The record gives the reactivity of an RNA of 177 nucleotides to DMS and 2A3.
RNA sequence: GGGAACGACUCGAGUAGAGUCGAAAAGGAGGUCGGGAAGCUCCGAGAGGAACUCGAGCGAGUGGGCCGGGAUGGCGAUAGCCUCGGUGUCCUGCUGGUCGUCGGCGUCGUCGUGGACCUUCGGGCCAGUUCUGGUAAGAUUCGUCUUACCAGAACUAAAAGAAACAACAACAACAAC
Reactivity to DMS in 0.01 (KOAc 150mM, MgCl2 10mM, bicine 150mM(pH8.5), 24C), signal-to-noise 7, nucleotides 027 to 126: g010g000a040g010g020u010c050g000g000g010a130a160g010c050u010c050c050g020a100g010a220g020g010a090a090c020u000c030g010a080g010c040g000a100g020u000g010g010g010c060c050g000g000g000a090u010g000g000c020g010a060u000a090g020c040c050u010c070g010g010u000g010u000c020c020u010g010c130u010g010g010u000c020g010u000c070g010g010c050g000u000c030g000u000c030g000u000g010g000a050c020c010u000u000c030g010g000g010c080c080
Reactivity to 2A3 in 0.01 (KOAc 150mM, MgCl2 10mM, bicine 150mM(pH8.5), 24C), signal-to-noise 6, nucleotides 027 to 126: g020g000a020g010g010u090c040g020g020g030a100a030g010c030u040c130c100g020a040g000a040g090g170a160a100c020u010c020g020a020g010c040g020a030g040u100g010g040g000c100c080g010g010g010a060u140g020g000c020g030a060u040a090g000c010c040u040c060g010g040u050g030u030c020c030u110g160c140u140g010g030u030c030g000u010c040g020g000c000g020u040c020g010u010c010g000u060g050g030a050c000c000u020u030c040g030g020g020c030c030
The reactions ran in a buffer of 150 mM KOAc, 10 mM MgCl2 and 150 mM bicine (pH 8.5), at 24 C. The 2A3 profile rests on 15,232 reads.